Structure probing data (DMS) for a 177-nucleotide construct.
DMS adducts were read by reverse transcription with MarathonRT.
Reactivities are given for positions 27 through 126.
Conditions: 150 mM KOAc, 10 mM MgCl2 and 150 mM bicine (pH 8.5), 24 C.
RNA sequence: GGGAACGACUCGAGUAGAGUCGAAAAGAUAUGGAGAAACCAUUCCGAUCCCACACGGGAGCUCGCGAUCGGAAACGAUCGAGUGGAGCUUUGAUCGUGUUGGGAUCGGAAUGGUUUCUCCUAAGUCGAUCUAAGGAUACUUCGGUAUCCUUAGAUCAAAAGAAACAACAACAACAAC
Reactivity to DMS in 0.01 (KOAc 150mM, MgCl2 10mM, bicine 150mM(pH8.5), 24C), signal-to-noise 1, nucleotides 027 to 126: g000a100u020a300u000g000g010a010g020a020a000a000c000c020a030u010u010c010c010g000a000u000c000c000c010a060c000a010c000g000g000g000a010g040c000u000c000g000c000g000a010u000c000g000g020a150a100a230c000g000a010u000c000g020a050g020u010g010g010a000g070c000u000u010u000g010a070u010c010g010u000g010u010u010g030g000g000a000u000c000g000g020a010a000u000g000g000u000u000u000c010u000c000c000u010a030a080g020u010c100